[RMDB]
RNA sequence: GGGAACGACUCGAGUAGAGUCGAAAACUGAGUUAUGCUGUUCUGCACGCAUGGUUUGGAGAGAGUGGUGCAAUGUCUGUGGCAUAAAAGAUGUUGUUCUACAAGGCUUAAAAGCUUGUUGUUACGUAUGAGAUGGACUUCGGUCCAUCUAAAAGAAACAACAACAACAAC
Reactivity to 2A3 in 0.01 (KOAc 150mM, MgCl2 10mM, bicine 150mM(pH8.5), 24C), signal-to-noise 3, nucleotides 027 to 129: c050u020g010a000g020u070u070a050u080g010c020u030g020u100u070c080u190g020c020a040c050g070c020a070u060g070g120u030u030u030g010g010a150g000a000g000a000g020u020g010g070u050g000c000a020a000u020g050u090c120u080g010u110g010g000c000a020u090a060a170a010a010g040a020u080g000u000u000g000u000u000c040u020a080c040a160a040g050g010c020u060u160a000a220a060a010g080c010u040u040g000u000u030g000u010u040a040c090g050u080a110u220g060
Reactivity to DMS in 0.01 (KOAc 150mM, MgCl2 10mM, bicine 150mM(pH8.5), 24C), signal-to-noise 2, nucleotides 027 to 129: c070u010g030a080g030u080u010a030u030g050c120u020g020u020u080c110u020g070c070a070c230g050c070a040u020g000g000u060u020u020g020g010a000g000a110g010a040g040u000g000g080u030g000c040a000a000u000g000u080c110u040g030u000g050g000c020a040u060a010a030a030a030g020a150u050g030u030u040g050u040u030c100u000a110c210a000a000g060g050c010u030u130a060a040a040a040g000c060u110u000g010u020u020g020u040u050a100c200g010u050a080u050g000